[RMDB]
RNA sequence: GGGAACGACUCGAGUAGAGUCGAAAAAGGUGUGUCCGUGUGGCAUCGGAGAGUGAUGCUCCGGGAGUAAAGGGUGAGGGUGUUGAUCGCCAGUGGAUCUGGACCCAAGUUCUUCCACUGUCAUCAAUCAACUCAACCUGUUCGCGGGUUGGGUUGAAAAAGAAACAACAACAACAAC
Reactivity to 2A3 in 0.01 (KOAc 150mM, MgCl2 10mM, bicine 150mM(pH8.5), 24C), signal-to-noise 9, nucleotides 027 to 126: a000g050g010u040g000u010g010u000c000c010g040u050g040u090g070g000c000a010u010c020g040g020a070g000a010g070u160g030a020u040g000c000u000c000c000g010g010g010a050g030u130a030a040a030g020g010g010u080g050a080g020g020g010u060g040u010u030g010a020u020c060g010c020c000a010g010u030g040g010a050u050c130u130g020g010a010c040c030c060a060a050g010u010u000c000u010u000c000c000a000c000u000g000u000c000a010u000c000a000a050
Reactivity to DMS in 0.01 (KOAc 150mM, MgCl2 10mM, bicine 150mM(pH8.5), 24C), signal-to-noise 9, nucleotides 027 to 126: a060g000g010u020g010u010g010u010c010c020g010u030g020u030g000g010c030a040u010c030g000g010a110g010a130g010u030g010a060u010g000c010u000c010c010g010g000g000a100g010u020a060a100a080g000g000g010u010g010a110g000g010g010u020g000u010u000g000a030u010c130g010c060c020a010g010u000g000g000a020u030c120u010g000g000a040c020c170c180a080a140g000u000u000c020u010u000c000c000a010c010u000g000u010c030a060u000c050a050a110